[RMDB]
RNA sequence: GGGAACGACUCGAGUAGAGUCGAAAAGGGAAUGGUGGUUGACCCCGUUAUCAAAUGAUUACCGACCAAUAAUUGGCGAAACUCGUUUCGCGUUGGCUGCCUAAUUCAAGGAAUUAGCGUGCCUUCAAAGACAUCAAGAAGUUCGCUUCUUGAUGAAUCUGUUAGAUUCGUUCGCGAAUCUAACAGAAAAAGAAACAACAACAACAAC
Reactivity to 2A3 in 0.01 (KOAc 150mM, MgCl2 10mM, bicine 150mM(pH8.5), 24C), signal-to-noise 2, nucleotides 027 to 156: g000g000g000a070a060u110g020g020u030g000g030u090u040g070a070c000c010c000c000g090u060u070a100u140c080a040a130a110u220g030a030u010u080a060c010c000g060a050c020c040a020a030u150a090a050u100u120g080g000c000g040a020a000a020c030u040c130g010u000u010u010c030g000c010g010u010u020g000g020c030u080g020c010c040u030a020a020u000u000c080a210a090g140g010a030a030u000u010a030g010c050g030u030g000c020c000u030u010c060a090a050a030g020a030c000a000u010c000a000a000g000a010a000g000u060u110c190g040c080u000u000c010u000u020g010a000u000g000a000a070
Reactivity to DMS in 0.01 (KOAc 150mM, MgCl2 10mM, bicine 150mM(pH8.5), 24C), signal-to-noise 2, nucleotides 027 to 156: g000g000g000a020a100u000g010g010u000g000g010u000u000g030a260c040c020c010c000g060u000u000a070u000c080a130a100a120u010g000a170u000u000a080c010c020g000a100c020c010a070a080u010a050a190u000u000g010g030c030g020a110a070a030c070u010c140g000u010u000u000c010g040c060g010u010u000g040g000c020u010g000c150c000u050a020a060u000u000c060a170a150g020g000a090a010u000u000a020g000c020g030u000g010c030c000u000u000c010a060a130a140g000a210c010a010u000c000a020a060g010a020a010g040u000u010c300g030c020u000u000c000u000u000g000a000u000g000a040a040
An RNA of 207 nucleotides, treated with 2A3 and DMS and read out base by base. It was measured as part of the RMDB library M2RFPK. For DMS, 3,008 sequencing reads were counted. DMS adducts were read by reverse transcription with MarathonRT. 2A3 adducts were read by reverse transcription with SuperScript II with manganese.